RNA sequence: GGGAACGACUCGAGUAGAGUCGAAAAGAUAUGGAAGGGUAAUGGCGUCUAUCUAAACUAAGCUCGCCAGUCGGAAACGACUGGAGGAGCCAUGAUUUAGAGUAGACGCCAUUACCCUUCCUAAGUCCGCUAUAACAAGGUUCGCCUUGUUAUAGCGAAAAGAAACAACAACAACAAC
Reactivity to DMS in 0.01 (KOAc 150mM, MgCl2 10mM, bicine 150mM(pH8.5), 24C), signal-to-noise 2, nucleotides 027 to 126: g000a090u000a300u000g000g000a030a020g000g020g000u000a030a000u010g000g000c000g030u000c000u000a060u000c010u000a000a000a020c000u000a300a290g010c000u000c000g020c000c010a010g020u010c000g010g010a200a140a240c000g020a030c000u000g010g010a010g010g000a010g010c020c040a050u010g010a130u000u000u000a000g000a070g010u010a040g010a020c000g000c000c000a000u000u000a000c000c000c000u000u000c000c000u000a020a080g000u010c010